[RMDB]
RNA sequence: GGGAACGACUCGAGUAGAGUCGAAAACGUCUGACACGUCACGUUCUUCAGAACGGUCGAAAUCACUUGCGGGACGUCACUUCAUUUGCGGCGUCGGGACAGCGAGGGAAAAUGGAGAGAUAUGCCGUAAUAUGGGUCCUUUCGAGGACCCAUAUUAAAAAGAAACAACAACAACAAC
Reactivity to DMS in 0.01 (KOAc 150mM, MgCl2 10mM, bicine 150mM(pH8.5), 24C), signal-to-noise 3, nucleotides 027 to 126: c090g030u010c040u020g000a100c140a100c100g030u000c020a140c050g020u010u000c000u030u030c210a120g010a050a050c020g000g020u030c020g000a070a070a230u010c040a000c040u000u000g000c030g010g020g000a030c030g000u010c000a070c050u010u010c220a070u010u020u010g000c130g000g000c020g000u010c010g000g000g000a080c070a080g030c040g000a010g000g000g000a020a050a060a090u040g030g020a080g000a130g020a080u010a050u020g020c030c050g020
Reactivity to 2A3 in 0.01 (KOAc 150mM, MgCl2 10mM, bicine 150mM(pH8.5), 24C), signal-to-noise 4, nucleotides 027 to 126: c020g050u030c020u040g080a030c030a010c110g030u060c020a070c300g000u040u020c020u300u220c050a050g010a060a010c010g050g000u050c000g060a000a070a080u110c040a030c070u050u110g010c030g000g060g020a010c050g000u000c000a010c030u090u100c100a190u110u060u180g030c050g000g000c000g020u020c040g010g030g020a010c030a020g000c040g040a060g000g020g060a000a040a010a040u080g010g000a060g000a020g000a040u020a040u190g080c030c010g010